An RNA of 207 nucleotides, treated with 2A3 and DMS and read out base by base. For DMS the reverse transcriptase was MarathonRT. The 2A3 profile rests on 1,799 reads. The reactions ran in a buffer of 150 mM KOAc, 10 mM MgCl2 and 150 mM bicine (pH 8.5), at 24 C. 2A3 adducts were read by reverse transcription with SuperScript II with manganese.
RNA sequence: GGGAACGACUCGAGUAGAGUCGAAAAAGAACAUGGGAAGGCCUCGUCUCUGAGCCAGUCCGCAUCAACUGGAAGAAAGACAUGGAUCUGACCAAGGGAUUGCUCGAUGCUGCCUGUGAUCUGGCCGAGGCCGAGAAAAAGGGUGGCGACCGCAAGAAGAAAUAGACAUAUUCGUAUGUCUAUUUCUAAAAGAAACAACAACAACAAC
Reactivity to 2A3 in 0.01 (KOAc 150mM, MgCl2 10mM, bicine 150mM(pH8.5), 24C), signal-to-noise 3, nucleotides 027 to 156: a000g100a060a030c070a110u100g020g000g040a060a070g020g010c010c010u040c040g030u000c020u000c050u110g060a080g090c000c000a000g010u010c030c020g060c040a070u040c050a030a140c020u020g000g030a030a030g030a040a130a010g000a010c040a090u200g110g040a220u020c000u010g050a050c020c000a010a050g020g000g020a110u050u240g060c070u090c080g010a020u050g000c020u010g000c010c000u030g030u070g020a050u040c030u040g020g000c000c000g010a050g010g020c010c000g000a020g000a040a110a000a010a000g030g000g000u030g000g000c030g030a060c020c030g050c080a020a030g070a050
Reactivity to DMS in 0.01 (KOAc 150mM, MgCl2 10mM, bicine 150mM(pH8.5), 24C), signal-to-noise 1, nucleotides 027 to 156: a040g000a020a090c030a050u010g000g000g020a180a130g000g020c010c030u000c010g010u000c030u010c040u000g020a140g000c070c010a060g010u000c010c080g000c110a070u000c040a050a070c020u000g000g050a180a100g020a100a090a070g020a030c090a120u000g020g000a090u000c000u010g000a250c030c030a070a160g010g050g000a080u000u000g000c030u000c040g050a080u000g020c000u000g010c040c020u000g030u010g000a100u000c020u010g000g000c040c020g000a040g020g010c020c000g000a010g000a050a050a100a080a170g010g000g040u000g020g010c010g010a040c040c000g020c040a070a110g000a170